[RMDB]
RNA sequence: GGGAACGACUCGAGUAGAGUCGAAAAGACUGGCUGUCAAGCCAGCACGGAGCCGUGAGCACCUCAUCCUUAGCCUUUUACAUAUCGCGAUAUGUAGCGCUUUUGGCUAGUUAUGGAUGAAAUUAGAGGGUACCGAUUUGUUCGCAGGUCGGUACCCAAAAGAAACAACAACAACAAC
Reactivity to DMS in 0.01 (KOAc 150mM, MgCl2 10mM, bicine 150mM(pH8.5), 24C), signal-to-noise 9, nucleotides 027 to 126: g010a200c000u000g000g000c000u000g010u050c270a090a040g010c000c000a010g000c040a090c110g010g000a070g010c020c020g010u010g010a280g010c060a100c070c050u000c000a010u000c000c010u010u000a010g010c010c010u000u020u030u000a020c020a020u000a010u000c100g020c250g010a050u000a010u000g010u010a020g010c300g010c180u020u020u020u010g000g010c000u000a020g010u030u040a070u020g000g000a020u000g000a020a060a070u020u020a070g010a300
Reactivity to 2A3 in 0.01 (KOAc 150mM, MgCl2 10mM, bicine 150mM(pH8.5), 24C), signal-to-noise 9, nucleotides 027 to 126: g080a080c000u010g000g010c010u030g090u300c100a070a010g000c000c000a000g000c000a010c030g060g030a030g050c050c020g090u110g040a040g020c040a060c010c020u010c000a010u010c000c000u020u010a000g000c000c000u030u080u060u040a020c020a020u060a010u060c060g030c070g180a010u020a020u090g030u030a030g040c040g100c130u090u130u100u080g010g000c000u000a020g030u120u170a090u200g010g000a000u010g010a020a030a020u160u120a070g060a090
The record gives the reactivity of an RNA of 177 nucleotides to DMS and 2A3.
Conditions: 150 mM KOAc, 10 mM MgCl2 and 150 mM bicine (pH 8.5), 24 C.
For 2A3 the reverse transcriptase was SuperScript II with manganese.
For DMS, 116,931 sequencing reads were counted.
2A3 is a SHAPE reagent: it acylates the 2'-hydroxyl of flexible nucleotides of all four kinds.
Values cover nucleotides 27 to 126.